[RMDB]
RNA sequence: GGGAACGACUCGAGUAGAGUCGAAAAGAUAUGGAUAAAUCCCAGGGUCCUGCGAAGUACCGUCGGAAACGACGGUAUGGAGGACCUGGGAGUUUAUCCUAAGUCAAAGCGGCUGUUCGCAGCCGCACAUGAGGAAGAUCUUCGGAUCUUCCUCAUGAAAAGAAACAACAACAACAAC
Reactivity to DMS in 0.01 (KOAc 150mM, MgCl2 10mM, bicine 150mM(pH8.5), 24C), signal-to-noise 3, nucleotides 027 to 126: g000a050u010a300u010g000g000a010u000a010a010a060u000c000c000c000a010g010g010g030u010c000c010u000g010c210g020a140a220g000u000a000c000c000g020u000c000g010g010a130a100a210c010g010a010c000g010g000u000a000u000g020g000a010g020g030a250c010c000u020g020g010g010a020g020u000u000u000a000u000c000c010u010a020a090g000u010c040a070a140a180g020c000g000g010c000u010g010u010u020c190g020c020a010g040c000c000g020c000a010
Reactivity to 2A3 in 0.01 (KOAc 150mM, MgCl2 10mM, bicine 150mM(pH8.5), 24C), signal-to-noise 3, nucleotides 027 to 126: g010a010u090a040u220g000g010a010u030a020a040a020u040c000c020c040a040g250g070g140u120c060c000u210g300c060g020a040a010g020u020a000c010c010g020u000c000g000g040a090a060a050c000g000a000c000g000g010u000a000u010g000g020a000g010g010a000c020c020u010g020g000g030a010g010u000u040u000a010u000c000c000u000a160a020g050u050c070a080a000a180g000c000g030g000c020u040g050u150u160c300g000c210a000g010c000c000g000c000a000